About this RNA
Source: RMDB library M2PK50, as collected in RNAgym. Structure probing data (2A3 and DMS) for a 177-nucleotide construct. 2A3 adducts were read by reverse transcription with SuperScript II with manganese. The DMS profile rests on 2,068 reads.

RNA sequence: GGGAACGACUCGAGUAGAGUCGAAAAGAACGCCACUUCGGUGGCGUUCGAAGAUCUACCACAGGUAGAUCACUAUCGUGUGAGACAUCGAUAGAUGUCAAAUGGUCCGGAAGUUCGCUUCCGGAAACAGACAGUCACAGUUCGCUGUGACUGUCUGAAAAGAAACAACAACAACAAC
Reactivity to 2A3 in 0.01 (KOAc 150mM, MgCl2 10mM, bicine 150mM(pH8.5), 24C), signal-to-noise 1, nucleotides 027 to 126: g000a010a000c000g030c030c010a000c000u030u150c260g080g000u000g020g000c000g000u000u000c000g000a000a000g030a000u000c000u000a010c010c010a130c040a300g060g000u040a000g000a000u010c030a000c010u140a160u170c120g040u120g040u000g160a070g000a090c040a030u000c000g090a050u100a260g050a010u010g020u010c000a030a090a050u140g060g040u000c000c010g000g000a000a000g000u030u070c170g000c080u010u000c030c010g000g000a000a000a000
Reactivity to DMS in 0.01 (KOAc 150mM, MgCl2 10mM, bicine 150mM(pH8.5), 24C), signal-to-noise 2, nucleotides 027 to 126: g000a000a000c000g030c020c000a000c000u000u010c190g040g000u000g010g010c000g000u000u000c010g000a050a060g040a010u000c000u000a000c000c010a140c240a160g000g030u000a000g000a000u000c020a100c090u010a020u010c130g010u000g000u020g010a230g010a050c000a010u000c000g010a110u010a110g000a050u000g000u010c000a030a090a070u020g000g000u010c010c000g010g000a000a020g000u000u010c270g010c010u000u000c000c000g000g000a000a020a080